[RMDB]
RNA sequence: GGGAACGACUCGAGUAGAGUCGAAAAGGAAACUUGUUCGCAAGUUUCCAAAGAACGCUGCAUCGCAAAGCGAGGCCGCGAGAGCCGCCAUACGCGAAGAAAAAACAAAUGGGUUCGCCCAUUUGAACUCUACAAAAUUGUUCGCAAUUUUGUAGAGAAAAGAAACAACAACAACAAC
Reactivity to DMS in 0.01 (KOAc 150mM, MgCl2 10mM, bicine 150mM(pH8.5), 24C), signal-to-noise 2, nucleotides 027 to 126: g030g010a000a000a020c000u000u000g000u000u010c120g020c010a070a010g020u020u000u000c000c010a000a060a100g000a150a130c030g020c030u010g000c040a100u000c030g000c020a110a110a200g040c020g010a050g000g020c000c060g000c040g040a080g000a180g010c030c060g000c030c050a070u020a060c150g020c030g010a040a080g010a020a030a060a060a120a170c010a020a010a020u000g000g000g000u000u000c250g020c000c000c000a010u000u000u000g000a070a150
Reactivity to 2A3 in 0.01 (KOAc 150mM, MgCl2 10mM, bicine 150mM(pH8.5), 24C), signal-to-noise 2, nucleotides 027 to 126: g020g010a000a000a010c000u030u030g020u050u050c070g000c070a010a000g000u020u000u000c000c010a010a020a000g010a080a010c000g000c030u020g000c010a060u010c020g020c080a250a080a030g010c020g000a020g000g010c010c010g000c030g030a050g010a040g250c030c040g010c030c030a130u100a140c090g010c030g020a060a080g070a050a150a020a010a010a000c000a010a000a010u000g000g000g030u020u040c230g060c030c000c000a010u000u010u000g000a030a000